[RMDB]
RNA sequence: GGGAACGACUCGAGUAGAGUCGAAAAACUGAAACAUCUCAGUAUCGGGAGGAACAGAAAACGCAACGUGAUGUCGUUAGUAACCGCGAGUGAACGCGAUACAGCCCAAACCGAAGCCCUCACGGGCAAUGUGGUGUCAGGGCUACCUCUCAUCAGCCUCCCUUCAAAGGUUCGCCUUUGAAGGGAGAAAAGAAACAACAACAACAAC
Reactivity to 2A3 in 0.01 (KOAc 150mM, MgCl2 10mM, bicine 150mM(pH8.5), 24C), signal-to-noise 4, nucleotides 027 to 156: a000c020u030g010a070a100a010c120a230u130c050u000c040a030g020u080a080u170c070g010g010g000a010g020g020a060a030c020a080g150a060a150a010a010c130g040c170a070a080c150g060u080g030a120u070g010u010c000g000u000u000a000g000u000a010a020c030c030g100c140g140a060g090u000g010a000a000c010g000c000g000a000u030a070c020a010g000c000c000c000a080a030a000c000c010g030a050a020g020c010c000c000u060c030a040c060g000g000g010c020a020a040u120g020u130g000g020u010g080u080c180a220g000g020g000c000u000a000c000c000u000c000u000c020a090u030c020a010g030c010
Reactivity to DMS in 0.01 (KOAc 150mM, MgCl2 10mM, bicine 150mM(pH8.5), 24C), signal-to-noise 1, nucleotides 027 to 156: a130c040u010g000a140a110a020c120a040u000c080u000c040a060g000u010a080u010c030g020g010g030a060g000g000a100a210c080a190g000a140a020a000a060c070g020c060a060a100c070g050u000g010a050u000g020u000c050g020u010u000a190g000u020a040a050c020c010g030c060g050a110g070u000g020a080a170c040g000c080g030a080u000a020c090a130g000c000c020c010a000a050a080c010c030g010a210a240g030c000c000c000u000c200a120c300g000g080g000c000a000a000u000g000u000g000g000u000g000u000c060a120g010g000g020c010u020a000c000c000u000c000u000c070a060u000c110a090g000c080
Chemical mapping of a 207-nucleotide RNA with 2A3 and DMS. The RNA was probed in 150 mM KOAc, 10 mM MgCl2 and 150 mM bicine (pH 8.5) at 24 C. DMS adducts were read by reverse transcription with MarathonRT.